[RMDB]
RNA sequence: GGGAACGACUCGAGUAGAGUCGAAAAUUGAAUGCGUGCGCAAGUUGACCUCUGAAGGCCGUAAACAAGCCAUUGAUGUUGCCUGUGAAGCCGCCGUUAAACAAGCUGUCAAGAAUCUCAAGUCCACUUUUACAUUGAAGGAAAAGAAAAAGAAGGCGUAUAGCAGAACCUUCGGGUUCUGCUAUACAAAAGAAACAACAACAACAAC
Reactivity to DMS in 0.01 (KOAc 150mM, MgCl2 10mM, bicine 150mM(pH8.5), 24C), signal-to-noise 1, nucleotides 027 to 156: u010u030g000a060a080u000g050c040g010u000g000c020g010c070a110a130g030u000u030g030a110c010c040u000c070u000g010a220a120g030g000c000c000g040u000a100a070a060c120a060a170g030c020c020a140u010u010g050a080u030g000u000u010g030c000c020u050g030u020g030a050a150g010c030c020g050c030c010g000u020u010a070a080a140c050a070a220g020c030u000g010u000c030a040a130g020a140a130u000c000u000c070a070a130g000u000c050c000a080c020u000u000u000u000a100c040a150u000u000g000a110a090g010g000a070a030a040a200g020a110a050a150a070a140g020a050a060g000g030c150
Reactivity to 2A3 in 0.01 (KOAc 150mM, MgCl2 10mM, bicine 150mM(pH8.5), 24C), signal-to-noise 1, nucleotides 027 to 156: u090u050g030a070a020u090g010c020g090u020g020c080g010c060a000a000g020u060u060g010a030c020c020u000c000u020g100a070a040g060g000c060c040g060u090a060a080a000c020a040a000g030c000c000a050u060u050g020a020u060g010u270u050g010c020c010u070g000u030g120a040a100g000c020c010g000c020c020g050u060u050a030a000a030c130a050a030g010c010u000g030u080c020a030a130g060a180a120u000c040u000c060a030a000g030u010c010c020a040c000u030u060u000u190a200c110a150u020u250g100a060a050g040g070a000a120a000a040g150a020a050a030a000a000g200a030a000g030g020c070